[RMDB]
RNA sequence: GGGAACGACUCGAGUAGAGUCGAAAAUAAUCGGCAUCGCGUAUAAUCGUACGGCAUUACGAUCGUAGCCGAUUACGAUCGCGGCUACGCGUAGCCGUAAUCGGCAUAUCGCGUAGCUAUAAUGCGCGCCUAGUCAAAUGUUCGCAUUUGACUAGGCAAAAGAAACAACAACAACAAC
Reactivity to DMS in 0.01 (KOAc 150mM, MgCl2 10mM, bicine 150mM(pH8.5), 24C), signal-to-noise 3, nucleotides 027 to 126: u010a020a040u000c030g000g000c000a200u000c110g000c090g030u020a110u000a110a040u000c070g010u000a060c170g000g000c080a050u000u000a060c010g000a040u020c010g040u000a090g000c000c020g000a040u000u000a010c010g010a050u000c080g060c300g010g000c010u010a000c000g000c000g000u010a070g020c010c000g000u000a030a130u020c020g010g000c020a050u000a080u000c000g000c000g000u000a040g010c000u000a010u000a030a020u000g010c020g020c190
Reactivity to 2A3 in 0.01 (KOAc 150mM, MgCl2 10mM, bicine 150mM(pH8.5), 24C), signal-to-noise 3, nucleotides 027 to 126: u050a000a010u040c030g040g010c040a050u090c070g030c050g100u140a060u070a240a090u080c050g040u090a040c050g130g010c060a040u090u100a030c060g040a090u050c040g040u010a010g000c020c010g020a000u030u010a000c020g010a010u040c010g000c040g070g000c010u010a010c010g000c000g000u010a000g010c020c000g000u020a070a150u190c010g030g000c040a060u030a010u140c020g000c000g010u000a000g000c000u010a030u020a020a010u060g020c070g050c020